RNA sequence: GGGAACGACUCGAGUAGAGUCGAAAAUGAUGACUCACCAUACACAGAUAUUGGAUUGAUACAAGAUCAUUUUGCUGAUGUACGAGAUGAGAUGAUCGCCAACGGUGAACUUGAUAGGCAGCGAUUGGCGAUACUCCGAAUUCGUUCGGAGUAUCGCAAAAGAAACAACAACAACAAC
Reactivity to DMS in 0.01 (KOAc 150mM, MgCl2 10mM, bicine 150mM(pH8.5), 24C), signal-to-noise 4, nucleotides 027 to 126: u000g020a050u000g000a120c050u010c000a040c030c020a090u000a030c060a100c080a090g010a040u000a050u010u010g020g000a100u010u030g020a110u010a110c300a080a180g000a030u000c010a050u000u000u000u000g000c030u000g010a100u000g010u010a060c070g010a050g000a090u000g000a070g000a110u010g000a070u000c030g020c020c040a030a060c060g000g020u000g020a050a100c040u010u010g000a150u030a080g010g000c050a060g000c030g010a110u010u000g000
Reactivity to 2A3 in 0.01 (KOAc 150mM, MgCl2 10mM, bicine 150mM(pH8.5), 24C), signal-to-noise 3, nucleotides 027 to 126: u110g020a060u040g070a020c020u000c020a030c010c010a000u030a020c060a010c040a070g120a090u080a060u140u180g060g070a030u050u170g040a020u090a200c120a040a110g010a090u020c020a020u040u060u080u120g000c020u020g020a230u050g040u100a020c080g050a040g030a270u010g010a000g010a040u100g040a010u040c000g000c010c000a020a000c040g030g070u060g070a050a050c000u040u070g070a030u080a070g000g000c000a000g040c010g150a180u020u090g060

The record gives the reactivity of an RNA of 177 nucleotides to DMS and 2A3. For DMS, 2,751 sequencing reads were counted. For 2A3 the reverse transcriptase was SuperScript II with manganese. Source: RMDB library OK2TRN, as collected in RNAgym. The RNA was probed in 150 mM KOAc, 10 mM MgCl2 and 150 mM bicine (pH 8.5) at 24 C.